Structure probing data (DMS and 2A3) for a 177-nucleotide construct. For 2A3 the reverse transcriptase was SuperScript II with manganese. For 2A3, 1,404 sequencing reads were counted. The RNA was probed in 150 mM KOAc, 10 mM MgCl2 and 150 mM bicine (pH 8.5) at 24 C. The data come from the RNA Mapping Database (RMDB), libraries RFM100 and RFMREP.
RNA sequence: GGGAACGACUCGAGUAGAGUCGAAAAUUAGGGAACGGGUGUGUGGCGCUCGUCAUGAAGAUAAACAAAAUUAUCGAAUAUAUUGUAGUAGCAAUCAUCGUUCUAGUGUGGACUUACUUCAUUGUCAUUCACGGGAGUAUUUCGAUACUCCCGUGAAAAAAGAAACAACAACAACAAC
Reactivity to DMS in 0.01 (KOAc 150mM, MgCl2 10mM, bicine 150mM(pH8.5), 24C), signal-to-noise 2, nucleotides 027 to 126: u060u030a080g000g030g040a070a040c070g010g020g050u010g000u030g000u000g000g020c020g030c020u000c040g000u000c090a040u010g010a260a110g010a030u040a090a030a050c160a060a100a100a160u000u000a000u000c030g000a040a020u020a040u020a110u050u000g000u020a070g010u000a030g000c000a050a050u000c060a060u010c000g000u010u000c020u000a070g000u000g020u000g020g020a050c080u000u010a090c040u010u040c130a030u030u010g010u000c130a090
Reactivity to 2A3 in 0.01 (KOAc 150mM, MgCl2 10mM, bicine 150mM(pH8.5), 24C), signal-to-noise 3, nucleotides 027 to 126: u110u060a070g000g000g040a070a040c040g030g030g000u000g000u020g000u040g200g020c010g000c000u010c020g010u010c030a040u070g070a020a110g030a040u070a010a110a070c190a060a030a040a050u120u090a020u050c020g010a060a000u180a050u030a050u120u140g080u090a160g020u050a020g030c020a070a020u060c010a050u060c080g000u020u070c070u020a030g050u010g050u020g110g000a000c000u010u050a000c000u010u120c040a090u080u170g070u050c010a030